[RMDB]
RNA sequence: GGGAACGACUCGAGUAGAGUCGAAAAUUUUUGAUUGCUCUAGGGAUUUAUUUUCUGUUACCUUUGAUUUAGGAUUCUGUAGUCCAGAUUCUGAUGAUGAAAUAUUGGAACAUACAUCAGAUAGCAAUAGACCUCUAGAUGAUCUAUAUGGAAGGUACCAACUUGUCUCAUUCGUGAGACAAGUUGGAAAAGAAACAACAACAACAAC
Reactivity to 2A3 in 0.01 (KOAc 150mM, MgCl2 10mM, bicine 150mM(pH8.5), 24C), signal-to-noise 1, nucleotides 027 to 156: u090u080u000u060u130g010a010u030u000g000c010u000c000u000a010g000g000g060a070u030u010u130a030u150u110u230u090c030u050g040u200u070a150c030c000u140u040u140g020a100u070u030u120a040g010g010a030u130u000c040u100g060u070a070g010u000c060c000a000g000a090u070u030c040u000g000a000u000g010a000u010g040a000a160a010u080a080u160u200g040g060a130a000c000a030u150a030c000a000u010c000a000g010a030u040a000g000c000a000a080u010a060g000a000c000c010u000c040u070a000g000a080u070g000a040u060c020u000a050u040a060u200g030g140a000a080g170g010u220a010

Structure probing data (2A3) for a 207-nucleotide construct. For 2A3 the reverse transcriptase was SuperScript II with manganese. 2A3 is a SHAPE reagent: it acylates the 2'-hydroxyl of flexible nucleotides of all four kinds. The reactions ran in a buffer of 150 mM KOAc, 10 mM MgCl2 and 150 mM bicine (pH 8.5), at 24 C.